[RMDB]
This 177-nucleotide RNA was probed chemically with DMS and 2A3. The reactions ran in a buffer of 150 mM KOAc, 10 mM MgCl2 and 150 mM bicine (pH 8.5), at 24 C. As a SHAPE reagent, 2A3 marks flexible, mostly unpaired nucleotides at the ribose 2'-OH. Values cover nucleotides 27 to 126.
RNA sequence: GGGAACGACUCGAGUAGAGUCGAAAACCGCGUGAGGCAGGAAACUGAGCAGCGAAAAGGGGCAGCUGCGGACGGCACAAGGAUCGCAUGCUUGAGGGAGUGGCAUGGCCACCCGAGGGGUCCUCUGAUAAAUCGAGCUGUUCGCAGCUCGAUUUAUAAAAGAAACAACAACAACAAC
Reactivity to DMS in 0.01 (KOAc 150mM, MgCl2 10mM, bicine 150mM(pH8.5), 24C), signal-to-noise 3, nucleotides 027 to 126: c010c000g040c100g000u000g000a190g030g000c030a070g000g010a070a090a160c040u000g000a130g020c030a130g010c040g000a030a050a110a050g000g000g000g030c080a010g010c010u000g000c020g010g000a040c060g000g000c000a090c150a170a070g010g000a140u000c040g000c100a190u000g020c060u000u020g000a150g000g000g000a050g000u000g030g020c040a190u010g020g010c000c020a020c010c020c000g010a110g020g000g000g030u000c020c030u000c140u000g000
Reactivity to 2A3 in 0.01 (KOAc 150mM, MgCl2 10mM, bicine 150mM(pH8.5), 24C), signal-to-noise 2, nucleotides 027 to 126: c000c000g060c000g030u090g040a040g010g030c030a000g070g130a020a040a060c030u030g020a050g000c020a000g000c000g060a130a020a000a070g070g050g000g010c010a020g020c020u020g000c000g060g010a040c020g020g070c100a040c040a050a080g020g000a020u020c000g010c120a080u130g020c000u050u020g050a090g010g200g070a110g050u050g000g060c120a190u040g200g000c030c000a030c000c030c010g000a040g000g060g000g040u010c000c010u030c050u040g010